[RMDB]
RNA sequence: GGGAACGACUCGAGUAGAGUCGAAAACGUUGUCAUCGACAACACCCUAUGCAUUCAUGCUCUGUAAGGAUGCGCCGAAAGGUGAGCAAGCCCGAGUUGCCCAGACCUGAAACGCAACACUUUAGAGAAAACCCGAAGCAGUUCGCUGCUUCGGGAAGAUAGAAAUGACGUUCGCGUCAUUUCUAUCAAAAGAAACAACAACAACAAC
Reactivity to 2A3 in 0.01 (KOAc 150mM, MgCl2 10mM, bicine 150mM(pH8.5), 24C), signal-to-noise 4, nucleotides 027 to 156: c100g010u000u000g010u020c080a210u110c300g020a010c000a000a010c010a070c010c000c000u040a050u080g010c030a020u020u040c040a040u170g000c000u000c010u040g050u040a000a020g020g000a000u000g000c000g010c000c020g070a150a060a010g000g010u030g010a030g000c030a030a030g040c010c040c050g150a100g070u030u050g030c000c000c040a040g030a120c000c080u070g030a050a070a030c030g000c030a030a060c020a040c130u080u140u110a090g020a000g010a040a110a040a050c000c000c000g000a010a000g000c010a000g020u050u150c210g030c090u000g010c000u000u000c010g010g000g010a000a000
Reactivity to DMS in 0.01 (KOAc 150mM, MgCl2 10mM, bicine 150mM(pH8.5), 24C), signal-to-noise 2, nucleotides 027 to 156: c100g040u010u000g010u000c030a190u000c140g000a080c010a070a010c040a170c040c010c020u000a070u000g030c030a130u010u020c020a230u000g030c000u000c030u000g010u010a260a140g030g020a110u000g000c000g010c050c030g000a130a130a150g000g010u000g000a070g010c050a160a210g000c070c040c040g000a100g020u000u000g000c000c020c020a130g000a100c030c010u000g000a170a110a080c030g000c040a040a040c040a100c050u010u000u000a070g000a140g010a090a050a080a170c010c010c000g030a010a010g000c000a010g010u000u020c300g020c030u000g010c020u000u000c000g010g000g080a000a020